Structure probing data (DMS and 2A3) for a 177-nucleotide construct. The reactions ran in a buffer of 150 mM KOAc, 10 mM MgCl2 and 150 mM bicine (pH 8.5), at 24 C. It was measured as part of the RMDB library TTRDEL.
RNA sequence: GGGAACGACUCGAGUAGAGUCGAAAAGAUAUGGAUGGCCAGCGACGAUCAUGUGACUCGGAAACGAGUCCAUGGGAGCUGGUCCUAAGUCAAGCGCUUAUCGUUUGCUUCGGCAAACGAUAAGCAAGGUAUCUGUUACGUUCGCGUAACAGAUACCAAAAGAAACAACAACAACAAC
Reactivity to DMS in 0.01 (KOAc 150mM, MgCl2 10mM, bicine 150mM(pH8.5), 24C), signal-to-noise 2, nucleotides 027 to 126: g000a100u010a120u000g000g010a170u020g010g000c000c000a010g010c000g010a080c180g000a030u010c000a010u010g000u000g000a010c010u000c000g010g000a090a070a180c000g010a030g000u000c000c000a010u010g000g000g000a040g020c000u010g000g000u000c000c000u000a050a200g000u000c090a140a180g010c230g010c000u010u000a000u000c000g000u000u000u000g000c000u000u010c270g030g000c020a000a000a010c000g000a010u000a000a010g010c000a000a010
Reactivity to 2A3 in 0.01 (KOAc 150mM, MgCl2 10mM, bicine 150mM(pH8.5), 24C), signal-to-noise 2, nucleotides 027 to 126: g070a070u200a050u270g130g000a110u140g040g000c020c000a010g020c000g270a300c000g000a170u010c000a020u010g280u300g060a010c000u000c010g000g030a070a060a000c010g000a000g000u000c000c000a000u010g020g010g010a010g010c010u000g000g000u010c000c000u020a060a000g010u020c070a130a060g120c050g000c170u010u010a000u010c010g010u000u010u010g000c010u050u070c290g110g000c000a000a000a000c020g000a000u010a000a000g010c000a000a000